[RMDB]
RNA sequence: GGGAACGACUCGAGUAGAGUCGAAAAGAUCAGAGUAGAAAACGAUGCGUUAAGUGUCCAGCAAACGGGGAGUUGCUGCCGGAACGAAAAGCAAAGCUUGCGGUAUCGUUUUCGCAUCCCGCUGAAAGUAAGCGGCGCGUCUUCGGACGCGCCGCAAGAUCUAUAAUACGUUCGCGUAUUAUAGAUCAAAAGAAACAACAACAACAAC
Reactivity to 2A3 in 0.01 (KOAc 150mM, MgCl2 10mM, bicine 150mM(pH8.5), 24C), signal-to-noise 1, nucleotides 027 to 156: g080a060u120c070a000g000a020g140u240a030g020a030a010a000a000c000g000a000u000g010c010g020u100u270a040a000g020u030g020u070c040c050a010g070c000a010a030a020c090g000g060g010g090a170g060u030u040g070c030u060g070c060c060g030g030a060a060c020g040a080a060a090a020g040c030a210a000a000g050c010u010u030g000c000g050g030u030a010u020c000g000u010u010u000u010c000g000c010a040u040c000c000c000g010c030u000g040a020a060a070g070u170a140a000g010c000g000g040c000g000c000g040u010c000u010u040c080g030g000a000c010g000c030g000c000c000g010c000a000a000
This 207-nucleotide RNA was probed chemically with 2A3. The data come from the RNA Mapping Database (RMDB), library M2RFPK.